[RMDB]
RNA sequence: GGGAACGACUCGAGUAGAGUCGAAAAGAUAUGGAACAUGAGGCUUUUGACGUCCAAGUCGGAAACGAUGGACGAUAAGCCUAUGUUCCUAAGUCAAAACACCGCCACCGUUCGCGGUGGCGGUGAACACCACCUAUGCGUUCGCGCAUAGGUGGUGAAAAGAAACAACAACAACAAC
Reactivity to 2A3 in 0.01 (KOAc 150mM, MgCl2 10mM, bicine 150mM(pH8.5), 24C), signal-to-noise 1, nucleotides 027 to 126: g000a010u030a030u060g020g000a000a000c010a000u080g230a080g110g000c090u300u190u300u200g120a040c000g010u040c000c030a080a240g300u060c030g040g000a000a000a000c030g030a020u040g000g020a010c040g050a050u080a280a050g060c030c000u000a030u000g010u000u000c000c000u010a000a000g000u020c050a000a000a150a110c010a010c070c010g170c000c030a000c010c010g120u150u130c300g000c050g080g000u020g000g000c000g030g030u030g000a020a020